[RMDB]
RNA sequence: GGGAACGACUCGAGUAGAGUCGAAAAUGUUCCGGAUUCGUCCGGAACAAAAUAUGGCACCCGUACUCGUCGAUACAAUGCCACGGAGAUGGACCGGGUGAAAAACCACUUAGUUCGCUAAGUGGAAGGAUAUUUCACGUUUCGACGUGAAAUAUCCAAAAGAAACAACAACAACAAC
Reactivity to DMS in 0.01 (KOAc 150mM, MgCl2 10mM, bicine 150mM(pH8.5), 24C), signal-to-noise 1, nucleotides 027 to 126: u010g000u000u000c000c000g010g010a040u000u000c250g000u000c010c020g000g000a000a000c000a010a010a070a120u060a190u000g000g010c040a020c010c010c030g000u010a110c230u000c010g020u000c020g010a220u020a070c140a090a060u020g000c090c070a060c090g000g000a160g020a020u000g020g000a110c280c020g000g000g030u020g000a030a080a050a150a140c000c000a000c000u000u000a010g020u010u020c250g010c010u010a000a000g000u000g000g010a070a040
Reactivity to 2A3 in 0.01 (KOAc 150mM, MgCl2 10mM, bicine 150mM(pH8.5), 24C), signal-to-noise 1, nucleotides 027 to 126: u070g000u020u020c000c000g010g020a060u070u080c260g020u000c000c000g000g000a000a000c000a000a010a000a000u160a040u030g090g030c040a010c010c000c000g020u020a040c020u050c060g030u000c010g000a000u060a220c050a280a140u160g040c010c020a040c020g120g000a090g010a050u050g030g020a030c070c010g000g020g040u000g010a040a000a000a000a040c000c020a000c000u000u010a010g010u000u040c260g020c100u000a000a000g000u000g000g020a010a020